[RMDB]
Structure probing data (2A3 and DMS) for a 177-nucleotide construct. It was measured as part of the RMDB library M2PK90. For DMS the reverse transcriptase was MarathonRT.
RNA sequence: GGGAACGACUCGAGUAGAGUCGAAAAUUAAAGAGAAAACUCACAUACAGUCAGACGCGUGUAAGGAGUGGUCAACCUUACGACUGUUUGAAAUAAUGCGUCAAAAGAUCGAAAGAUCUAAAAAAAAACUAUUCCAUAAGUUCGCUUAUGGAAUAGUAAAAGAAACAACAACAACAAC
Reactivity to 2A3 in 0.01 (KOAc 150mM, MgCl2 10mM, bicine 150mM(pH8.5), 24C), signal-to-noise 2, nucleotides 027 to 126: u080u010a080a060a000g090a000g110a050a160a100a070c030u050c050a040c030a060u180a020c000a010g020u020c000a030g000a020c010g000c000g000u000g010u020a000a000g010g000a010g020u040g010g000u020c000a030a020c000c000u000u000a000c010g000a010c000u000g000u040u030u080g030a010a020a000u100a020a000u030g000c000g000u000c000a000a010a030a070g000a010u010c010g030a070a010a020g000a000u000c040u100a110a060a000a000a000a000a010a020
Reactivity to DMS in 0.01 (KOAc 150mM, MgCl2 10mM, bicine 150mM(pH8.5), 24C), signal-to-noise 2, nucleotides 027 to 126: u010u010a060a100a190g010a070g000a110a110a120a130c050u000c070a140c120a080u010a020c000a010g000u000c010a100g000a030c010g000c020g010u010g010u000a000a000g000g010a000g010u000g020g010u010c040a160a000c030c010u000u000a000c020g000a020c000u000g010u010u010u000g010a060a040a070u010a020a030u000g030c020g010u000c040a110a080a090a040g010a000u000c000g010a150a080a110g010a000u010c010u000a000a000a000a000a050a040a040a060